[RMDB]
RNA sequence: GGGAACGACUCGAGUAGAGUCGAAAACACGCACUCCUGUAGGCCGUUAUGGGGAAUCGGGGCGGCAAUCAUGCGUGAUGGUGUUUGACGCUGAAGCCGAGGAAGUUUCAGCCGCCUGCAGCAUCAGGCAUGGCCAGUAUUUCGAUACUGGCCAUGCAAAAGAAACAACAACAACAAC
Reactivity to 2A3 in 0.01 (KOAc 150mM, MgCl2 10mM, bicine 150mM(pH8.5), 24C), signal-to-noise 4, nucleotides 027 to 126: c040a020c040g030c010a100c010u050c020c010u070g050u100a030g110g000c010c030g050u070u050a140u260g060g000g000g070a040a060u090c060g010g010g070g000c000g010g010c000a000a120u110c020a030u100g060c120g120u060g020a070u060g030g140u020g040u030u130u150g030a010c040g010c000u000g050a020a000g000c020c020g010a070g110g160a160a030g010u000u000u010c020a000g030c060c010g020c000c000u010g000c010a030g030c000a040u050c000a020g140
Reactivity to DMS in 0.01 (KOAc 150mM, MgCl2 10mM, bicine 150mM(pH8.5), 24C), signal-to-noise 2, nucleotides 027 to 126: c050a070c030g000c080a090c100u000c040c040u000g070u010a030g050g010c060c040g060u000u000a030u020g000g000g000g010a170a140u000c020g000g020g060g010c120g000g000c020a130a020u000c040a050u010g000c010g020u000g000a060u050g000g010u000g000u000u070u000g000a180c060g020c000u020g030a030a020g040c000c020g010a100g000g020a200a070g000u000u000u000c000a050g000c080c040g000c050c000u010g000c010a050g000c010a030u010c010a080g000
This 177-nucleotide RNA was probed chemically with 2A3 and DMS. Values cover nucleotides 27 to 126. Source: RMDB library OK1LIB, as collected in RNAgym. DMS adducts were read by reverse transcription with MarathonRT.